[RMDB]
RNA sequence: GGGAACGACUCGAGUAGAGUCGAAAAUUUUAUGACCUAUGGAUGUCACACUGACCCGAACAUCAUUUGGGCGUCUCAGUGGCUGGUAAAUGACUGUACCAAACCUUCAUUCAUCUAUCUAUAUCCAGAUCAUGCAAUGAUUCGUCAUUGCAUGAUCAAAAGAAACAACAACAACAAC
Reactivity to 2A3 in 0.01 (KOAc 150mM, MgCl2 10mM, bicine 150mM(pH8.5), 24C), signal-to-noise 3, nucleotides 027 to 126: u020u020u050u060a150u090g080a030c000c010u020a080u080g040g000a030u060g010u090c010a010c010a010c120u040g060a070c000c000c010g010a030a030c040a140u240c060a070u000u030u020g020g020g000c050g130u020c060u020c080a010g010u010g030g000c060u070g000g020u050a050a050a020u040g030a020c050u030g020u070a060c090c000a120a040a050c010c030u040u040c000a010u030u020c010a020u010c010u060a060u030c020u050a100u020a040u190c000c040a000
Reactivity to DMS in 0.01 (KOAc 150mM, MgCl2 10mM, bicine 150mM(pH8.5), 24C), signal-to-noise 3, nucleotides 027 to 126: u010u010u020u000a070u010g010a120c020c010u000a100u000g000g010a050u010g010u000c180a100c080a120c070u010g000a080c030c030c010g010a040a040c090a080u010c270a170u000u000u000g010g030g010c210g010u010c070u000c050a040g030u000g000g010c130u000g020g000u000a020a050a030u010g000a080c070u010g000u010a080c060c050a040a060a090c170c220u000u000c020a050u000u000c030a020u000c030u000a050u010c020u000a060u000a040u000c020c060a100

Description: An RNA of 177 nucleotides, treated with 2A3 and DMS and read out base by base. The RNA was probed in 150 mM KOAc, 10 mM MgCl2 and 150 mM bicine (pH 8.5) at 24 C. The DMS profile rests on 2,595 reads. Values cover nucleotides 27 to 126. The 2A3 profile rests on 3,456 reads.